[RMDB]
RNA sequence: GGGAACGACUCGAGUAGAGUCGAAAAGGGCGACGAGCGCCGGCGCGGAGAACUUCUCGCCGGCGCUUACAAAGUAGUCGUAAUCGCGGGGCAGCAGCACCCGUGCCGUGACUCGUUGCGGGUGCCCGGUUAAUGUCGGAUUCGUCCGACAUUAACCAAAAGAAACAACAACAACAAC
Reactivity to DMS in 0.01 (KOAc 150mM, MgCl2 10mM, bicine 150mM(pH8.5), 24C), signal-to-noise 1, nucleotides 027 to 126: g010g040g010c020g020a020c110g000a020g000c000g090c000c000g060g000c010g060c120g000g020a010g020a120a130c140u000u000c000u000c010g000c030c010g020g000c000g000c010u000u000a030c080a020a070a060g020u020a030g010u000c010g000u100a080a010u040c020g030c010g000g000g000g010c070a190g000c080a130g000c010a060c010c000c000g000u000g090c100c100g000u050g000a140c160u020c030g000u010u040g020c000g000g000g000u000g010c000c080c010
Reactivity to 2A3 in 0.01 (KOAc 150mM, MgCl2 10mM, bicine 150mM(pH8.5), 24C), signal-to-noise 1, nucleotides 027 to 126: g070g020g000c000g010a000c020g000a000g020c010g020c000c000g000g040c050g000c090g000g000a080g000a300a220c210u070u000c020u010c000g000c000c000g010g000c020g010c050u000u000a000c000a000a100a020g040u110a000g020u010c010g030u010a030a090u090c030g000c060g090g060g020g030c010a140g060c070a010g020c020a200c000c000c000g000u000g010c030c020g150u130g030a100c020u010c150g060u040u060g020c010g010g020g010u060g030c000c030c040

Source: RMDB library OK1LIB, as collected in RNAgym.
The record gives the reactivity of an RNA of 177 nucleotides to DMS and 2A3.
For DMS the reverse transcriptase was MarathonRT.
For DMS, 1,527 sequencing reads were counted.
The reactions ran in a buffer of 150 mM KOAc, 10 mM MgCl2 and 150 mM bicine (pH 8.5), at 24 C.
Values cover nucleotides 27 to 126.